Structure probing data (2A3 and DMS) for a 207-nucleotide construct.
For 2A3 the reverse transcriptase was SuperScript II with manganese.
For DMS the reverse transcriptase was MarathonRT.
For 2A3, 9,048 sequencing reads were counted.
The RNA was probed in 150 mM KOAc, 10 mM MgCl2 and 150 mM bicine (pH 8.5) at 24 C.
[RMDB]
RNA sequence: GGGAACGACUCGAGUAGAGUCGAAAAACAUCAUUGUUCAUUUCAAUAUUUUCAUAGUUAGCAAACAUACGAACCAUCAUAUCAGUGUACCUCCGUAUAAGGGAUAUUGUAAACUACGAUGCAUCUAUUCAUGACACUUGUGUUCAUACCCGUCAAGGGAUACUAUGGGAUUCGUCCCAUAGUAUCCAAAAGAAACAACAACAACAAC
Reactivity to 2A3 in 0.01 (KOAc 150mM, MgCl2 10mM, bicine 150mM(pH8.5), 24C), signal-to-noise 9, nucleotides 027 to 156: a000c020a040u100c020a030u030u090g030u100u050c030a050u050u100u120c060a080a030u040a100u080u070u070u120c050a050u060a090g030u050u080a040g090c080a080a100a080c040a060u130a050c040g060a070a040c050c010a040u090c020a010u080a040u200c040a030g030u020g010u110a080c020c020u060c020c030g070u100a060u030a180a050g050g000g000a010u020a050u080u070g050u070a050a050a030c030u050a020c060g040a020u030g020c010a030u000c030u070a060u050u080c040a040u080g010a000c000a010c060u040u060g010u000g010u080u030c020a020u050a180c000c000c010g050u070c070a050a040g060
Reactivity to DMS in 0.01 (KOAc 150mM, MgCl2 10mM, bicine 150mM(pH8.5), 24C), signal-to-noise 3, nucleotides 027 to 156: a050c030a090u000c070a110u010u000g010u000u000c000a080u000u000u000c030a030a070u000a050u000u000u000u000c060a090u000a120g010u000u000a100g030c030a090a150a080c070a100u000a050c040g000a050a140c060c030a050u010c030a080u000a110u000c100a070g040u000g010u000a030c020c010u000c020c040g000u010a050u010a090a070g000g020g020a060u000a040u000u000g020u010a050a050a080c060u010a070c000g010a080u000g000c030a050u000c050u000a050u000u020c060a090u020g010a050c050a050c080u010u000g000u000g000u000u010c040a120u000a120c030c010c050g000u000c100a060a180g000